[RMDB]
RNA sequence: GGGAACGACUCGAGUAGAGUCGAAAACACAUCCGCCAUCAGUUCCUCGACGAGCUACCCGAGCUGACACCGCGGCCAUCAACCAUCGCGAUGUAUUCCACCGUCGACGGCGAACCUCACGACACCGACCUCGUGCUGGGUUCGCCCAGCACGAGGUAAAAGAAACAACAACAACAAC
Reactivity to DMS in 0.01 (KOAc 150mM, MgCl2 10mM, bicine 150mM(pH8.5), 24C), signal-to-noise 1, nucleotides 027 to 126: c100a130c210a070u040c010c000g000c030c000a010u000c040a150g000u000u000c120c000u000c070g000a140c010g000a120g000c000u000a080c030c010c030g090a010g000c000u000g000a090c050a110c050c040g040c000g020g000c100c080a030u000c120a040a180c000c030a020u000c000g050c010g000a000u000g030u020a100u020u000c000c070a230c090c010g080u100c130g000a010c080g000g000c120g000a100a030c000c000u000c100a030c070g220a020c100a040c010c170g050
Reactivity to 2A3 in 0.01 (KOAc 150mM, MgCl2 10mM, bicine 150mM(pH8.5), 24C), signal-to-noise 2, nucleotides 027 to 126: c060a010c020a080u080c010c030g000c050c020a080u020c050a050g000u050u030c010c000u070c020g030a030c010g000a050g090c010u060a110c000c010c000g020a010g000c000u060g020a000c000a010c060c040g020c000g020g020c010c000a100u070c040a020a090c010c000a060u040c040g020c010g050a000u040g000u030a130u070u040c030c000a040c000c070g120u130c060g090a120c040g000g000c000g060a050a060c010c020u060c030a010c020g020a020c020a040c040c040g090
An RNA of 177 nucleotides, treated with DMS and 2A3 and read out base by base. For DMS, 940 sequencing reads were counted. For DMS the reverse transcriptase was MarathonRT.